Chemical mapping of a 177-nucleotide RNA with DMS and 2A3. Reactivities are given for positions 27 through 126. For DMS the reverse transcriptase was MarathonRT. It was measured as part of the RMDB library OK2TRN. The reactions ran in a buffer of 150 mM KOAc, 10 mM MgCl2 and 150 mM bicine (pH 8.5), at 24 C. The DMS profile rests on 3,286 reads.

RNA sequence: GGGAACGACUCGAGUAGAGUCGAAAAGUGAUCUCUAAGAUGGAAGACAAGAUUACGUCUUUACUCAGUUCCAAUCAGGAUGUAGUAGAUAGGAUAUAUAAGCAAGUGGCUCUUGAAUCUCCGCUGGAAACGUCUCUAGAUUCGUCUAGAGACGUUUAAAAGAAACAACAACAACAAC
Reactivity to DMS in 0.01 (KOAc 150mM, MgCl2 10mM, bicine 150mM(pH8.5), 24C), signal-to-noise 4, nucleotides 027 to 126: g020u010g000a030u000c020u010c030u010a100a110g020a120u000g000g000a070a080g000a080c060a070a080g010a070u000u000a100c050g010u000c010u000u000u000a030c020u000c030a120g020u010u000c020c020a060a100u000c130a080g000g010a080u000g020u010a020g000u000a060g010a070u010a070g010g010a060u000a080u010a050u010a060a140g020c050a050a060g020u000g000g020c050u010c020u000u000g000a060a080u000c030u000c050c050g020c110u010g000g010
Reactivity to 2A3 in 0.01 (KOAc 150mM, MgCl2 10mM, bicine 150mM(pH8.5), 24C), signal-to-noise 2, nucleotides 027 to 126: g050u030g080a170u000c000u030c060u120a080a120g090a170u170g050g060a150a080g030a060c000a010a060g000a080u000u050a060c080g030u000c000u020u030u010a070c030u000c020a030g000u040u000c010c000a000a140u100c080a080g120g000a030u050g030u100a050g030u020a040g020a140u050a040g010g090a030u050a000u020a020u040a200a050g000c010a120a000g090u010g110g000c010u010c000u110u080g010a080a060u030c010u000c010c050g020c050u060g050g060